The data come from the RNA Mapping Database (RMDB), libraries RFM100 and RFMREP. The record gives the reactivity of an RNA of 177 nucleotides to DMS and 2A3. For 2A3 the reverse transcriptase was SuperScript II with manganese. Values are in units of 0.01, from 0 to 300, in steps of 10. The RNA was probed in 150 mM KOAc, 10 mM MgCl2 and 150 mM bicine (pH 8.5) at 24 C. For DMS the reverse transcriptase was MarathonRT.
[RMDB]
RNA sequence: GGGAACGACUCGAGUAGAGUCGAAAAAGCUACCUCAGUUACGACUGAGGUAGCAAGGUCCAUCGAUCCCAACGAUCAAUAAACUGUGUUAUUAAACAAGUUUGUUCGUUCGGCUCGAGUUAUUAAACACUUGUUAUAUCUUCGGAUAUAACAAGUGAAAAGAAACAACAACAACAAC
Reactivity to DMS in 0.01 (KOAc 150mM, MgCl2 10mM, bicine 150mM(pH8.5), 24C), signal-to-noise 9, nucleotides 027 to 126: a080g010c000u000a000c000c000u000c000a010g000u010u000a120c200g020a050c000u000g010a010g000g010u000a000g010c000a010a010g020g010u010c010c020a150u000c010g000a010u000c010c000c050a030a020c020g010a030u010c060a140a080u010a080a020a030c010u000g010u010g010u000u000a160u030u030a080a050a010c010a060a020g000u000u000u000g010u000u000c010g000u000u010c300g000g000c110u000c010g000a030g010u010u010a080u010u020a090a110a160
Reactivity to 2A3 in 0.01 (KOAc 150mM, MgCl2 10mM, bicine 150mM(pH8.5), 24C), signal-to-noise 9, nucleotides 027 to 126: a010g000c000u000a000c000c000u000c000a000g000u010u060a070c250g020a010c150u010g000a000g000g000u000a000g000c000a000a000g010g000u020c010c010a040u010c000g000a000u000c000c000c000a000a000c000g010a010u040c040a110a090u150a130a060a020c030u060g010u010g060u300u070a230u120u300a140a120a010c010a020a010g010u000u010u020g010u010u010c010g000u000u000c010g000g000c000u000c010g010a010g030u070u120a130u080u210a070a090a010